[RMDB]
RNA sequence: GGGAACGACUCGAGUAGAGUCGAAAACUCGCUCAAACAUACAGAGUUGUUGUGCGAAAUGAAUCUCUCUGCAUUAGAAUGGUCGAAGAAUCAGCGGCAAUUCGAGACCAAAUUAGAAGCCGCAUUAACAGCUUUGGAACACGCCUUGCUGACGUGACGUCAUAGUAUAUUUCGAUAUACUAUGACGAAAAGAAACAACAACAACAAC
Reactivity to DMS in 0.01 (KOAc 150mM, MgCl2 10mM, bicine 150mM(pH8.5), 24C), signal-to-noise 3, nucleotides 027 to 156: c030u000c020g000c040u010c080a120a040a150c080a150u000a240c090a050g020a050g020u000u010g020u000u000g020u000g030c040g010a060a070a130u020g010a150a130u000c020u000c080u000c040u010g010c070a150u010u010a050g020a080a130u010g020g030u000c020g000a160a200g000a110a040u000c030a110g020c040g010g050c030a090a080u000u000c010g010a300g010a130c010c020a030a050a070u010u020a170g010a100a130g000c080c020g000c000a070u000u000a040a050c060a050g030c010u010u010u010g010g000a070a080c080a030c020g000c000c020u000u000g010c120u000g020a050c050g020u010g000a250
Reactivity to 2A3 in 0.01 (KOAc 150mM, MgCl2 10mM, bicine 150mM(pH8.5), 24C), signal-to-noise 3, nucleotides 027 to 156: c020u030c010g020c040u060c060a120a130a060c000a030u260a020c040a040g120a030g050u050u020g040u010u010g020u040g020c030g060a030a030a120u190g040a110a100u070c080u020c050u000c000u110g040c040a070u060u090a060g070a260a120u080g020g000u010c020g000a160a020g020a050a040u030c090a030g020c020g010g010c000a020a030u010u000c010g000a020g000a040c000c000a010a070a100u090u070a040g040a120a010g030c020c010g000c020a000u060u080a030a010c010a010g010c010u180u070u110g020g040a060a050c000a020c040g060c000c040u060u090g030c040u040g050a040c020g010u020g050a040